[RMDB]
The record gives the reactivity of an RNA of 207 nucleotides to 2A3 and DMS.
Conditions: 150 mM KOAc, 10 mM MgCl2 and 150 mM bicine (pH 8.5), 24 C.
Source: RMDB library RSTRND, as collected in RNAgym.
The 2A3 profile rests on 2,548 reads.
For DMS the reverse transcriptase was MarathonRT.
RNA sequence: GGGAACGACUCGAGUAGAGUCGAAAAGGGGGCGUUCUUGGAUUCGACGGGGAUUGCGAGGCUCGAGGUGCAUGUCGAGAAUGAGAGAAUCUCGUUAAAUACUUUCAAAACUUAUAGUUGCAAACGACGACAACUACGCUUUAGCGGCUUAAUUCCCACCCAUAUUAGACUUCGGUCUAAUAUGGGUAAAAGAAACAACAACAACAAC
Reactivity to 2A3 in 0.01 (KOAc 150mM, MgCl2 10mM, bicine 150mM(pH8.5), 24C), signal-to-noise 4, nucleotides 027 to 156: g010g010g000g000g010c020g020u030u040c030u030u040g050g030a060u060u050c020g040a030c060g020g010g010g000a050u040u050g040c040g020a050g040g010c020u010c040g020a030g020g020u040g020c040a050u080g060u110c010g000a000g000a050a020u040g010a010g000a000g000a050a050u050c000u000c040g040u000u010a030a050a010u080a190c000u030u050u070c050a110a100a020a010c020u090u080a030u050a160g000u000u000g000c020a050a160a030c080g080a010c010g010a000c030a040a000c030u110a040c030g020c000u060u070u120a070g020c020g030g010c020u050u080a070a040u080u020c000c000c000
Reactivity to DMS in 0.01 (KOAc 150mM, MgCl2 10mM, bicine 150mM(pH8.5), 24C), signal-to-noise 2, nucleotides 027 to 156: g030g020g010g080g050c080g000u010u000c040u000u000g010g020a200u000u000c030g010a090c070g000g010g020g000a100u010u000g000c010g000a140g070g020c010u000c050g000a070g030g030u010g040c010a060u010g030u010c030g000a030g000a040a190u000g000a070g000a080g000a090a130u000c040u000c050g010u000u000a020a020a080u000a080c020u000u020u000c030a070a040a060a040c060u000u000a050u000a030g020u000u010g030c030a020a100a180c100g000a110c010g010a060c010a040a070c030u000a040c050g010c070u000u000u000a090g020c040g010g010c070u000u020a010a220u000u000c000c000c020